[RMDB]
RNA sequence: GGGAACGACUCGAGUAGAGUCGAAAAGCGCAGAGAUUGCGAGGCGACCGGGGCCAGCUGGGCCCCAGCGGCUCGCCCCUCGGCGGGGCCGGGAGCCGCGCCAGUCGGAGCCCCUGGCUGAGGGCGGCUAUGAUGUCGUGUUCGCACGACAUCAUAGAAAAGAAACAACAACAACAAC
Reactivity to 2A3 in 0.01 (KOAc 150mM, MgCl2 10mM, bicine 150mM(pH8.5), 24C), signal-to-noise 2, nucleotides 027 to 126: g020c020g000c010a020g050a010g040a190u140u200g040c010g020a020g030g020c020g010a120c030c010g030g040g000g020c010c000a080g070c180u220g000g000g030c020c000c000c000a000g000c000g010g000c000u000c000g000c000c000c000c000u020c030g110g040c060g000g000g020g020c000c040g100g030g020a010g010c000c000g000c000g010c000c000a030g060u110c040g020g000a050g010c010c000c000c000u010g050g000c000u020g020a050g010g010g000c000g000g000
Reactivity to DMS in 0.01 (KOAc 150mM, MgCl2 10mM, bicine 150mM(pH8.5), 24C), signal-to-noise 3, nucleotides 027 to 126: g020c020g020c030a050g000a170g000a090u010u010g010c000g000a060g000g000c010g000a090c060c050g000g010g000g000c010c000a180g030c230u050g010g000g000c010c020c020c020a010g010c010g010g000c010u000c000g000c020c160c120c020u000c130g020g010c140g000g020g010g030c090c300g030g020g030a050g000c020c010g000c020g000c070c090a060g010u020c070g000g000a160g010c080c030c020c000u010g000g000c010u010g000a130g010g000g000c060g000g020
An RNA of 177 nucleotides, treated with 2A3 and DMS and read out base by base. The 2A3 profile rests on 3,380 reads. For 2A3 the reverse transcriptase was SuperScript II with manganese. DMS adducts were read by reverse transcription with MarathonRT. Conditions: 150 mM KOAc, 10 mM MgCl2 and 150 mM bicine (pH 8.5), 24 C. In probing experiments dimethyl sulfate is read out at A N1 and C N3, which are open when not base-paired.